[RMDB]
An RNA of 177 nucleotides, treated with DMS and read out base by base.
The data come from the RNA Mapping Database (RMDB), library OK2TRN.
Conditions: 150 mM KOAc, 10 mM MgCl2 and 150 mM bicine (pH 8.5), 24 C.
RNA sequence: GGGAACGACUCGAGUAGAGUCGAAAACAAAACUCUGAAGGCGAUUCCCCAUUAUCCACAUUGGUUACGGUAGCAACCCGUCAAGGAAUCCCUGGCCAACCUCCAAUGUUGACGGUUAAAGCGCUCACACGCUAGGAUGGUUCGCCAUCCUAGCGUGAAAAGAAACAACAACAACAAC
Reactivity to DMS in 0.01 (KOAc 150mM, MgCl2 10mM, bicine 150mM(pH8.5), 24C), signal-to-noise 1, nucleotides 027 to 126: c070a050a120a180a110c050u000c010u030g050a000a070g000g000c030g000a200u000u000c010c030c000c190a120u030u000a070u000c100c030a050c040a110u010u000g000g030u000u010a010c100g020g000u010a050g020c030a130a060c200c010c010g000u000c090a080a080g000g010a090a080u000c030c020c010u010g000g030c030c070a050a080c050c040u000c000c020a100a030u000g000u010u000g030a070c150g000g000u000u000a030a120a070g020c150g000c040u000c100a140